RNA sequence: GGGAACGACUCGAGUAGAGUCGAAAACCUCGCUGUUCGCAGCGAGGAAAAAGCGUACUACGAAGCGUGGCGUCUCCCCACCGUCAAUCCCAAAUAGGAUUGACGAGGACGAACUACCACACUUCGUAUCGCAAAAACAAUUCGUUCGCGAAUUGAAGCUAUGGGUGAAGUUCGCUUCACCCAUAGCAAAAGAAACAACAACAACAAC
Reactivity to 2A3 in 0.01 (KOAc 150mM, MgCl2 10mM, bicine 150mM(pH8.5), 24C), signal-to-noise 2, nucleotides 027 to 156: c000c000u000c000g010c000u030g070u040u120c300g060c140a000g000c000g040a000g000g010a070a000a010a000a010g040c060g000u090a120c070u010a000c040g000a000a000g010c000g020u000g010g000c000g010u000c060u080c050c040c030c010a100c020c000g000u000c000a000a000u030c000c060c000a250a230a130u230a150g000g010a010u000u010g000a000c000g000a010g000g010a000c000g000a060a050c070u100a130c120c000a000c000a000c000u000u000c030g000u010a040u230c010g000c000a030a030a030a030a030c010a000a000u020u000c010g020u070u060c200g000c000g190a000a000u030u050g030a060a010